[RMDB]
RNA sequence: GGGAACGACUCGAGUAGAGUCGAAAACACCCAGCCGCCUGCGCGAAGCCCUGUGUCGCGUCAACCCCCGGCUGGGGGAGAUGAGCGAUGCAGGGGAGGUGUUUGGGGAGAUUCUGAAUGCGGUGGGGGAGCAAUAAUAAUUCGUUAUUAUUGCUCCAAAAGAAACAACAACAACAAC
Reactivity to DMS in 0.01 (KOAc 150mM, MgCl2 10mM, bicine 150mM(pH8.5), 24C), signal-to-noise 9, nucleotides 027 to 126: c120a170c000c000c020a120g010c050c030g010c030c040u000g010c110g020c050g010a090a180g000c020c000c000u000g010u000g010u000c000g000c000g010u000c010a030a120c000c000c000c000c000g020g020c270u020g020g010g000g000g010a050g010a030u000g000a300g000c010g010a010u000g010c000a000g000g000g000g000a010g000g020u000g000u000u000u000g000g000g000g000a070g000a100u010u000c030u010g010a080a090u010g010c040g010g010u000g000g000g010
Reactivity to 2A3 in 0.01 (KOAc 150mM, MgCl2 10mM, bicine 150mM(pH8.5), 24C), signal-to-noise 8, nucleotides 027 to 126: c030a020c010c010c000a010g030c020c020g030c020c050u150g030c060g000c030g100a090a040g090c000c010c000u000g000u010g000u000c010g010c020g100u080c020a150a300c000c000c000c000c020g120g090c210u300g100g010g000g000g000a030g010a040u050g000a010g000c000g000a000u010g000c000a000g000g020g000g000a010g010g010u050g010u030u080u080g020g010g040g020a090g020a050u150u030c020u140g090a150a060u100g020c020g040g010u060g050g020g020